[RMDB]
RNA sequence: GGGAACGACUCGAGUAGAGUCGAAAAUUGGGGAGGCCAAGGCAGGCGGAUCACCUGAGGUCAGGAGUUAGAGACCAGCCUGGCCAACAUGGUGAAACCCCGUCUCUACCACAAAUACAAAAAUUAGCCAGGUAUGGUAGCACAAGCCUGUAAUCCAGAUAGUUUUAGGUUUCGACCUAAAACUAUCAAAAGAAACAACAACAACAAC
Reactivity to 2A3 in 0.01 (KOAc 150mM, MgCl2 10mM, bicine 150mM(pH8.5), 24C), signal-to-noise 2, nucleotides 027 to 156: u110u060g000g000g000g030a050g040g000c010c030a040a020g040g040c010a040g020g000c010g050g000a010u000c000a010c010c000u000g020a000g000g020u000c000a000g020g020a050g020u120u220a070g010a010g030a210c070c000a000g000c000c000u000g010g000c040c010a000a000c070a040u150g010g000u000g040a050a050a040c030c040c020c020g000u000c010u000c010u030a040c010c020a060c030a060a140a010u130a030c060a010a110a050a010a130u080u110a050g080c030c020a020g040g010u090a050u080g020g040u020a010g020c050a040c020a230a000g000c010c000u040g000u100a010a040u050c030c000a000
Reactivity to DMS in 0.01 (KOAc 150mM, MgCl2 10mM, bicine 150mM(pH8.5), 24C), signal-to-noise 1, nucleotides 027 to 156: u000u010g000g040g060g010a090g040g110c090c040a070a040g000g010c040a050g050g000c020g040g020a300u000c050a020c000c050u010g000a020g010g020u000c000a010g000g020a110g010u000u030a210g020a100g020a020c000c030a150g010c000c020u010g010g010c010c010a000a060c070a100u030g000g060u000g010a040a020a080c000c010c000c000g000u020c010u000c000u000a040c010c030a100c210a030a030a040u010a160c010a030a070a030a060a120u010u000a070g010c110c020a030g010g000u000a030u010g010g030u010a030g030c060a090c090a060a090g030c020c010u000g010u010a070a120u020c020c000a300